RNA sequence: GGGAACGACUCGAGUAGAGUCGAAAAUGAACAUGAGAUGAACAACACUCUUCUUGGGAGUACCAGCCUUGCUUGGUUCAUGGCCACUUUUCCUGAUUAUCUUGCAGCUAUAUUAGGUCAUGUGACAAAGUUCUGGCCAGUGGCAAGGGAACACAAGCGCUAGUCAAGCAUUCGUGCUUGACUAGCGAAAAGAAACAACAACAACAAC
Reactivity to 2A3 in 0.01 (KOAc 150mM, MgCl2 10mM, bicine 150mM(pH8.5), 24C), signal-to-noise 2, nucleotides 027 to 156: u110g000a040a000c080a050u170g020a060g080a100u140g060a090a000c050a020a000c010a000c080u000c000u120u000c010u040u030g010g010g020a020g030u010a040c040c040a090g130c000c000u100u040g040c040u060u060g040g040u220u070c020a120u090g060g000c000c040a050c040u100u030u000u000c020c000u060g020a080u000u120a060u110c080u080u200g160c030a010g000c040u040a080u040a110u300u080a050g000g080u020c050a020u080g110u150g120a030c120a020a090a000g000u120u070c050u140g010g010c010c010a060g000u000g020g000c050a000a000g080g000g070a010a010c030a000c000a130a010g060